[RMDB]
RNA sequence: GGGAACGACUCGAGUAGAGUCGAAAAGAAGUGUGCGGUGCAGAUCGGUGUCGAUCAGCGCGCGGUCAUCAUGCUGGCCAUGAAUUUCUACGAGCCUCUUGCCCAGAUCGCGCAGGAGCGCAACGCACAGGUCACUAGUAUUCGUACUAGUGACCUGAAAAGAAACAACAACAACAAC
Reactivity to 2A3 in 0.01 (KOAc 150mM, MgCl2 10mM, bicine 150mM(pH8.5), 24C), signal-to-noise 6, nucleotides 027 to 126: g110a090a010g140u070g000u020g100c020g050g000u010g020c020a020g020a030u010c010g080g160u300g240u300c020g000a010u010c010a010g010c020g000c000g000c000g050g010u010c010a030u030c010a020u060g070c090u050g060g000c040c010a060u130g090a110a230u220u200u070c080u100a050c060g010a020g000c000c010u020c000u020u040g010c010c000c020a040g010a030u030c010g000c010g000c020a030g030g080a090g020c090g000c040a030a020c010g000c000a010
Reactivity to DMS in 0.01 (KOAc 150mM, MgCl2 10mM, bicine 150mM(pH8.5), 24C), signal-to-noise 6, nucleotides 027 to 126: g020a100a110g010u000g010u000g000c010g020g000u000g020c000a110g000a020u000c000g030g020u020g020u010c030g020a020u000c010a250g020c140g010c010g010c010g000g020u000c010a160u010c050a020u000g020c150u000g000g010c060c020a070u010g010a060a170u010u020u000c080u000a100c110g020a180g010c010c020u000c030u000u010g020c070c040c060a130g000a020u000c020g010c040g020c010a080g010g000a130g010c190g000c020a010a010c000g010c050a050
About this RNA: The data come from the RNA Mapping Database (RMDB), library OK2TST. The record gives the reactivity of an RNA of 177 nucleotides to 2A3 and DMS. The 2A3 profile rests on 7,724 reads. The RNA was probed in 150 mM KOAc, 10 mM MgCl2 and 150 mM bicine (pH 8.5) at 24 C. For DMS the reverse transcriptase was MarathonRT.